The record gives the reactivity of an RNA of 177 nucleotides to DMS.
It was measured as part of the RMDB library OK2TST.
Reactivities are given for positions 27 through 126.
The DMS profile rests on 805 reads.
[RMDB]
RNA sequence: GGGAACGACUCGAGUAGAGUCGAAAAGCGGUGGAGCUAUAACCAUUCGAGUUGUAGAGGAUAAUACCACUGACCAAGUUAACACCCCCUUAGCGGUCACAGUUUAUCAAGCAUGUGUAAAUGUAAGAGACAACCCAGAAUUCGUUCUGGGUUGUCUAAAAGAAACAACAACAACAAC
Reactivity to DMS in 0.01 (KOAc 150mM, MgCl2 10mM, bicine 150mM(pH8.5), 24C), signal-to-noise 1, nucleotides 027 to 126: g020c010g020g020u030g000g000a200g000c000u000a020u000a020a020c010c010a280u010u040c240g000a050g030u020u010g050u000a070g010a080g000g010a100u020a050a100u000a140c030c020a010c060u000g000a200c000c040a040a200g020u000u020a060a070c130a300c050c030c020c050c030u000u010a040g000c070g010g010u010c040a060c070a100g000u000u000u000a010u030c120a030a030g000c100a040u000g000u000g040u000a090a050a030u000g000u000a110a100g020

The reactions ran in a buffer of 150 mM KOAc, 10 mM MgCl2 and 150 mM bicine (pH 8.5), at 24 C.